[RMDB]
RNA sequence: GGGAACGACUCGAGUAGAGUCGAAAAAGCGGCUAUACGUAGCCGCAAUCAUUCAAUAUUGCCGGUUUGAACGAAAUUGAUCAGUUCACCGGGAGCAUUGUAUCGAAGCGGCGAUACGUCGCCGCAACGCCUGAGAGGCGUUCGCGCCUCUCAGGCGAAAAGAAACAACAACAACAAC
Reactivity to 2A3 in 0.01 (KOAc 150mM, MgCl2 10mM, bicine 150mM(pH8.5), 24C), signal-to-noise 1, nucleotides 027 to 126: a000g050c000g000g000c000u020a050u000a040c150g140u000a000g000c000c000g000c000a000a000u010c000a000u000u000c000a000a000u000a000u020u030g260c000c000g070g140u300u020u230g000a000a000c010g000a030a120a120u220u260g000a240u300c060a060g050u000u000c000a020c000c000g040g000g000a000g000c000a030u000u000g000u090a010u030c210g060a150a000g000c000g000g020c000g050a050u000a050c100g030u000c000g000c000c000g000c000a000a000
Description:
This 177-nucleotide RNA was probed chemically with 2A3.